[RMDB]
RNA sequence: GGGAACGACUCGAGUAGAGUCGAAAACUUGCAGGUUCGCCUGCAAGAAAAAACCGUAGGCAUGUGAUGUCUUUUGACGAGGACGUUUCGAAAGAGACGAGAACCUCGAUAAGACAUACAUGCCUAAACGGAAAAAAGCGACACUUCGGUGUCGCAACAUAGAUGCAGUGUUCGCACUGCAUCUAUGAAAAGAAACAACAACAACAAC
Reactivity to 2A3 in 0.01 (KOAc 150mM, MgCl2 10mM, bicine 150mM(pH8.5), 24C), signal-to-noise 2, nucleotides 027 to 156: c000u000u000g010c000a000g000g060u060u180c190g150c060c000u000g000c000a000a000g010a060a000a000a000a000a010c030c000g010u030a040g000g020c000a010u010g040u130g090a120u010g010u160c040u090u070u070u110g170a090c030g000a030g000g030a200c010g000u010u000u010c020g010a080a060a030g000a020g000a010c020g020a040g090a190a110c020c000u000c000g010a020u000a010a000g000a000c000a000u010a000c000a010u010g030c000c000u010a010a010a010c010g050g000a120a000a220a000a000a000g000c000g050a010c010a010c020u140u230c300g090g000u000g000u000c000g000c010a000a000
Reactivity to DMS in 0.01 (KOAc 150mM, MgCl2 10mM, bicine 150mM(pH8.5), 24C), signal-to-noise 2, nucleotides 027 to 156: c010u020u000g010c000a000g010g000u010u010c300g050c010c000u000g100c020a020a030g000a010a100a070a070a070a090c020c030g010u000a050g020g000c010a050u000g000u010g000a010u010g010u000c000u000u000u000u000g020a260c090g050a020g020g040a290c000g030u010u000u000c010g070a220a120a300g010a050g000a000c000g010a120g010a130a170c010c000u000c000g030a050u020a040a010g030a010c020a020u010a000c000a030u010g020c000c000u030a010a040a060c030g010g010a000a040a060a080a100a110g010c000g020a030c010a020c030u000u000c300g030g010u000g020u010c000g050c000a000a040